This 207-nucleotide RNA was probed chemically with 2A3. Reactivities are given for positions 27 through 156. The data come from the RNA Mapping Database (RMDB), library OK3TST. For 2A3, 542 sequencing reads were counted.

RNA sequence: GGGAACGACUCGAGUAGAGUCGAAAAAUAAGCCGUAUCGCGUGAACGGGGAACUGGUCGAUGCCGACCACCAAUACGACGAAAAAUUCGACGACGUAGAAUUCGGCGGCGGUCGCACACAGUACACCAUCGUCAUUUGUGAGUUAAUGCGGAGGUGGUAGUCUUGUGUGUUCGCACACAAGACUACAAAAGAAACAACAACAACAAC
Reactivity to 2A3 in 0.01 (KOAc 150mM, MgCl2 10mM, bicine 150mM(pH8.5), 24C), signal-to-noise 1, nucleotides 027 to 156: a010u070a030a000g060c010c000g050u020a070u080c020g000c020g030u000g050a050a050c020g000g000g000g000a010a010c000u010g000g020u010c000g010a010u060g000c000c020g170a300c020c020a000c000c000a020a000u030a030c060g020a000c000g140a020a070a000a140a230u120u160c030g030a040c010g020a020c010g030u030a000g020a060a170u120u100c030g000g000c000g000g000c030g080g050u000c030g040c030a030c010a000c000a040g000u080a060c010a090c160c000a230u100c010g000u000c000a040u020u160u280g090u060g010a040g060u100u150a100a040u140g000c050g000g040a050g050g100u110g040